[RMDB]
RNA sequence: GGGAACGACUCGAGUAGAGUCGAAAAAGAGAUCACACCUAAGACGGCUGUGACUGGACUUGUGAGGGUCGCACGUCUUUGCUGUUUGCGGGAGGGCUCAGUUAUUGACCAAGACGUCUACAUCACGGACUUUCCUACACUUCGGUGUAGGAAAGUCAAAAGAAACAACAACAACAAC
Reactivity to DMS in 0.01 (KOAc 150mM, MgCl2 10mM, bicine 150mM(pH8.5), 24C), signal-to-noise 1, nucleotides 027 to 126: a100g000a100g000a070u000c030a060c080a150c040c000u000a170a090g030a080c030g000g010c180u000g000u000g000a030c020u000g000g020a080c000u000u020g020u000g000a190g010g000g020u010c040g030c060a100c100g010u010c010u010u000u000g000c060u000g010u000u000u000g000c110g000g000g020a100g000g000g050c060u000c040a060g020u000u020a110u000u040g000a070c050c050a060a070g020a110c090g000u000c010u000a050c060a070u010c070a070c170g000
Source: RMDB library OK2TRN, as collected in RNAgym. This 177-nucleotide RNA was probed chemically with DMS. Values cover nucleotides 27 to 126.